This 207-nucleotide RNA was probed chemically with 2A3. The 2A3 profile rests on 1,303 reads.
[RMDB]
RNA sequence: GGGAACGACUCGAGUAGAGUCGAAAAGGGGUCACACCGCAGCUAGCCUGACCCUCACUUGGAUUUAGAGCCUGAAGCCUCCACGGGCUCUUGUCAGUGAGCAGGCUUGAAAAAAUUGUGACGGAGGCACCCAAAGUAUUGACUUCGGUCAAUACAAGGUAUAAUGGUCGUUCGCGACCAUUAUACCAAAAGAAACAACAACAACAAC
Reactivity to 2A3 in 0.01 (KOAc 150mM, MgCl2 10mM, bicine 150mM(pH8.5), 24C), signal-to-noise 2, nucleotides 027 to 156: g040g020g000g000u040c010a010c010a010c080c060g080c080a070g080c130u150a000g010c000c020u010g060a150c010c090c000u010c010a000c000u080u270g170g040a100u300u300u090a020g000a000g000c000c000u060g040a110a020g010c010c010u020c060c000a000c040g000g000g000c010u030c010u000u010g000u030c040a060g000u000g010a000g010c000a020g000g000c000u030u040g020a060a030a010a010a050a030u200u100g020u010g020a020c030g010g010a000g010g010c020a070c000c020c000a080a200a010g030u020a000u030u000g010a000c000u050u080c300g070g000u030c010a000a000u000a000c030a000a030